[RMDB]
RNA sequence: GGGAACGACUCGAGUAGAGUCGAAAAUCUGUUCCCUUCGGGGAACAGAACUGCGCCUGGACUUAAAGCCAUUGCACUUUAGAAAAUAAACAAACAAAAUAAGCCCUUCUGGUUUCGACCAGAAGAAUGUAUUAGUACCAUUCGUGGUACUAAUACAAAAAGAAACAACAACAACAAC
Reactivity to 2A3 in 0.01 (KOAc 150mM, MgCl2 10mM, bicine 150mM(pH8.5), 24C), signal-to-noise 3, nucleotides 027 to 126: u000c000u010g020u000u000c020c000c000u000u020c180g040g000g000g010a000a010c000a000g000a020a020c010u060g020c020g030c020c010u040g050g020a110c000u060u150a080a050a010g000c020c020a060u050u120g010c060a040c040u090u120u150a100g080a040a110a060a080u230a070a080a030c070a040a150a000c030a040a190a050a100u190a110a050g050c040c010c000u000u020c010u010g000g030u040u090u100c160g030a010c010c000a010g000a000a010g000a010a010
Reactivity to DMS in 0.01 (KOAc 150mM, MgCl2 10mM, bicine 150mM(pH8.5), 24C), signal-to-noise 3, nucleotides 027 to 126: u000c010u000g010u000u000c000c000c000u000u010c200g020g020g010g010a000a000c000a000g010a020a050c110u000g000c200g010c000c040u000g030g000a080c050u010u010a050a070a090g010c070c050a050u000u000g000c060a120c030u000u000u000a070g000a110a050a070a050u000a060a040a080c120a050a080a090c080a050a060a070a050u010a090a120g010c110c070c000u000u000c000u000g000g010u000u000u010c160g000a020c000c010a000g000a020a030g000a060a040
The record gives the reactivity of an RNA of 177 nucleotides to 2A3 and DMS. Values cover nucleotides 27 to 126. The data come from the RNA Mapping Database (RMDB), library M2PK50. For DMS, 2,483 sequencing reads were counted.